Overview
The record gives the reactivity of an RNA of 177 nucleotides to DMS and 2A3. For DMS the reverse transcriptase was MarathonRT. DMS (dimethyl sulfate) methylates the pairing face of unpaired adenines and cytosines. Values are in units of 0.01, from 0 to 300, in steps of 10. The RNA was probed in 150 mM KOAc, 10 mM MgCl2 and 150 mM bicine (pH 8.5) at 24 C.

[RMDB]
RNA sequence: GGGAACGACUCGAGUAGAGUCGAAAAGUUACCUGGUUAUCGCCGGAAGGGGAGUUUCAGAAGUGGAACGGUACAGCCUGGGUGAAAGAUGCAGAAGCAGAAAAACUGUUCCGGAUUCGGGAGGCGGUCAUGACACAAUUUUCGAAUUGUGUCAUGAAAAAGAAACAACAACAACAAC
Reactivity to DMS in 0.01 (KOAc 150mM, MgCl2 10mM, bicine 150mM(pH8.5), 24C), signal-to-noise 5, nucleotides 027 to 126: g010u010u010a080c060c010u010g010g010u000u000a070u000c070g000c020c010g000g020a100a100g010g000g010g000a130g010u010u000u000c040a070g010a120a100g020u000g000g000a040a040c020g000g020u010a060c120a110g000c050c020u000g020g000g020u000g000a060a070a100g000a100u000g010c050a090g000a050a100g010c040a070g000a070a080a070a100a060c050u000g010u000u000c020c010g010g000a160u000u010c080g000g000g010a120g000g000c070g000g000
Reactivity to 2A3 in 0.01 (KOAc 150mM, MgCl2 10mM, bicine 150mM(pH8.5), 24C), signal-to-noise 2, nucleotides 027 to 126: g020u040u070a170c000c010u010g010g070u090u080a110u130c020g030c060c030g070g040a060a050g070g030g000g000a050g020u000u050u130c060a060g020a120a040g100u090g040g030a030a010c010g030g030u070a040c030a030g000c000c010u030g030g040g010u080g070a120a060a020g110a020u140g000c020a010g050a100a030g000c020a000g120a060a090a040a000a030c020u020g010u040u000c020c000g080g020a140u100u060c030g040g000g000a010g010g010c010g010g020

Overview:
Reactivities are given for positions 27 through 126. Source: RMDB library OK2TST, as collected in RNAgym.